[RMDB]
RNA sequence: GGGAACGACUCGAGUAGAGUCGAAAAGGCUGUGUUGUGGCGGGGGCGAAACAGGAUCGACAAGGGUGUAAAGAUCGCUCUUUUACUCGGCAUGAUACCACCGUUAUCAGGUCAACAGAGUAGUUGCUAGGGGAACGGGUGUUCGCACCCGUUCCAACAACUUUACUUUCUUCGGAAAGUAAAGUUGAAAAGAAACAACAACAACAAC
Reactivity to 2A3 in 0.01 (KOAc 150mM, MgCl2 10mM, bicine 150mM(pH8.5), 24C), signal-to-noise 3, nucleotides 027 to 156: g060g000c040u050g010u010g010u150u040g060u070g040g010c020g020g010g000g010g010c020g020a010a040a010c050a060g030g040a080u040c030g020a040c080a090a040g010g060g000u080g040u110a110a110a020g070a100u060c020g000c030u040c000u010u160u010u040a080c030u010c020g000g020c050a040u050g010a010u020a050c000c090a080c070c040g030u020u020a050u090c030a000g000g050u020c010a050a030c020a090g060a000g080u100a010g010u050u020g010c030u110a080g110g080g000g030a000a000c000g010g000g020u000g000u030u050c110g010c030a000c000c010c000g000u000u000c000c000a000a000
Reactivity to DMS in 0.01 (KOAc 150mM, MgCl2 10mM, bicine 150mM(pH8.5), 24C), signal-to-noise 2, nucleotides 027 to 156: g000g050c050u000g050u000g010u000u010g080u000g040g010c060g000g020g030g030g010c040g030a110a050a080c080a140g000g020a110u010c010g030a070c030a080a070g030g030g000u010g010u010a080a100a150g020a130u000c030g010c070u000c040u010u000u000u010a030c050u000c020g010g040c020a190u000g000a090u000a060c050c030a150c110c040g020u000u000a080u000c040a050g010g000u000c020a050a060c040a070g000a090g020u000a070g000u000u000g000c010u000a110g030g010g030g020a000a020c000g020g000g000u000g020u000u000c300g020c000a010c020c010c000g020u010u000c000c000a000a060